[RMDB]
RNA sequence: GGGAACGACUCGAGUAGAGUCGAAAAGCCUGGCCAACAUGGUGAAACCCAAUUUCCAUAAAAAUACAAAAAUUAGCCGGGUGUGGUGGCACAUGCCUGUAAUCCCAGCUACUCGGGAGGCUGAGGCUGUAUAUGGUCAUUUCGAUGACCAUAUACAAAAAGAAACAACAACAACAAC
Reactivity to 2A3 in 0.01 (KOAc 150mM, MgCl2 10mM, bicine 150mM(pH8.5), 24C), signal-to-noise 2, nucleotides 027 to 126: g020c000c000u020g000g020c060c040a050a000c040a110u080g010g010u080g040a100a050a060c020c010c000a000a050u070u070u060c030c010a070u220a110a170a050a080a050u190a160c060a030a210a060a050a140u050u040a020g000c020c000g000g020g000u020g000u010g020g020u010g010g000c000a010c000a040u030g010c000c000u010g000u040a020a010u000c000c000c000a000g010c030u190a210c060u110c100g000g020g000a010g010g000c000u000g020a020g070g000c040
Reactivity to DMS in 0.01 (KOAc 150mM, MgCl2 10mM, bicine 150mM(pH8.5), 24C), signal-to-noise 3, nucleotides 027 to 126: g020c010c000u000g010g000c030c050a050a060c060a040u010g010g020u010g000a040a090a090c020c020c010a070a140u010u010u010c030c030a140u010a020a060a070a080a060u020a100c030a050a040a050a060a100u010u010a030g020c030c000g010g010g020u000g010u000g010g000u010g000g010c020a090c050a020u000g000c010c010u000g000u000a040a040u000c000c000c000a040g010c020u000a080c070u000c110g000g010g010a060g000g010c020u000g010a050g010g020c120